[RMDB]
The record gives the reactivity of an RNA of 177 nucleotides to DMS.
RNA sequence: GGGAACGACUCGAGUAGAGUCGAAAAGAUAUGGAGCGAUGUUACCGCGAUAUAGACAUGUCCGAAAGGGUCGGAAACGACCCUGAGGACAACAGCUAUAUCGCGGUAACCGCUCGCUCCUAAGUCACAUGAUCAUGGUGUUCGCACCAUGAUCAUGAAAAGAAACAACAACAACAAC
Reactivity to DMS in 0.01 (KOAc 150mM, MgCl2 10mM, bicine 150mM(pH8.5), 24C), signal-to-noise 1, nucleotides 027 to 126: g000a080u000a300u000g000g020a010g020c000g040a000u020g010u020u000a000c000c000g090c030g000a010u000a000u000a060g000a050c080a230u010g000u020c070c010g050a300a100a000g010g040g010u000c000g020g000a060a110a300c000g000a020c000c000c000u000g000a300g020g000a000c000a000a010c280a120g000c000u020a020u000a000u000c000g000c050g050g000u010a000a000c000c040g000c050u000c040g020c010u070c000c000u030a030a080g010u000c030a170